[RMDB]
RNA sequence: GGGAACGACUCGAGUAGAGUCGAAAAACUGCAACUUCGGUUGCAGUAAAAAGCGUACUACGGGAGAUCACGUUCUACCCACCCGAAUCCCAAAUAGGAUUCGGAGGAACUAUGAUCGAGGAUCGUAUCGCAAAAAACGCCAUGUUCGCAUGGCGAAUGUACGUGCAAGUUUCGACUUGCACGUACAAAAAGAAACAACAACAACAAC
Reactivity to 2A3 in 0.01 (KOAc 150mM, MgCl2 10mM, bicine 150mM(pH8.5), 24C), signal-to-noise 4, nucleotides 027 to 156: a000c000u000g000c010a000a000c000u050u100c220g150g000u010u000g010c000a010g010u000a000a000a000a010a010g020c020g030u060a070c070u010a000c050g010g000g000a010g000a000u000c000a010c040g000u010u020c020u120a300c000c000c010a010c010c000c010g010a000a000u040c020c010c020a220a260a100u270a090g000g010a000u000u000c000g010g000a000g000g000a000a010c010u030a120u200g000a000u010c000g010a230g020g000a010u000c000g000u010a020u100c020g000c020a070a090a000a000a030a030c000g010c020c000a000u010g040u090u060c250g000c160a000u000g000g000c000g010a000a060
Reactivity to DMS in 0.01 (KOAc 150mM, MgCl2 10mM, bicine 150mM(pH8.5), 24C), signal-to-noise 1, nucleotides 027 to 156: a070c040u000g000c010a020a010c010u000u000c300g060g000u000u000g040c010a010g050u010a000a000a100a040a110g000c050g020u000a080c060u000a050c000g010g020g000a220g000a010u000c030a070c180g010u030u000c000u000a120c030c000c000a300c130c010c000g000a020a000u000c000c010c000a060a230a240u000a080g000g000a030u020u000c010g000g000a120g110g020a060a000c010u000a050u030g000a020u000c030g000a120g040g000a020u020c050g000u000a010u000c030g000c070a000a070a060a090a140a070c000g050c000c010a000u000g010u000u010c180g040c030a080u000g000g040c000g000a010a050